[RMDB]
RNA sequence: GGGAACGACUCGAGUAGAGUCGAAAAUGGAUAAGCAACGCGCGCAACGUGCUGCAUGGCACGCGACAGUACGUACUGGAGUAAUAUGGUCGGGACUGUCAGGGACCUAGAAAAAUAACAGAUUAAUGUAGCUACGCGAUAGCUGCAAGUGACGGGCCGUUAUAGAAGGUUUCGACCUUCUAUAACGAAAAGAAACAACAACAACAAC
Reactivity to DMS in 0.01 (KOAc 150mM, MgCl2 10mM, bicine 150mM(pH8.5), 24C), signal-to-noise 3, nucleotides 027 to 156: u000g040g020a090u000a070a100g040c020a050a060c060g020c030g000c030g040c100a090a120c030g000u010g000c000u020g000c120a080u020g030g040c010a070c000g020c010g000a040c020a100g010u010a030c010g030u020a060c000u000g010g010a150g000u010a060a100u010a110u000g020g020u000c060g000g020g000a110c030u000g000u000c050a070g020g030g030a110c040c020u000a110g010a030a100a030a040a120u010a060a120c070a100g010a130u000u000a060a100u000g030u000a030g020c010u000a030c040g020c160g020a300u000a040g000c010u000g020c010a050a100g000u000g010a050c100g010g010g000c120
Reactivity to 2A3 in 0.01 (KOAc 150mM, MgCl2 10mM, bicine 150mM(pH8.5), 24C), signal-to-noise 7, nucleotides 027 to 156: u110g040g020a060u080a120a030g020c030a030a090c040g030c010g000c010g000c080a030a060c050g010u020g000c020u040g070c080a090u120g050g000c010a000c030g010c020g020a000c000a020g020u050a010c030g030u020a030c040u050g030g040a050g070u160a070a130u160a100u200g050g010u030c020g040g000g090a040c010u030g020u040c030a030g020g040g010a020c010c030u070a070g140a070a090a010a000a010u200a050a020c040a030g070a050u110u140a110a050u120g000u010a000g010c000u010a010c060g050c090g270a120u030a010g000c000u000g000c010a020a040g060u030g060a020c020g010g010g030c050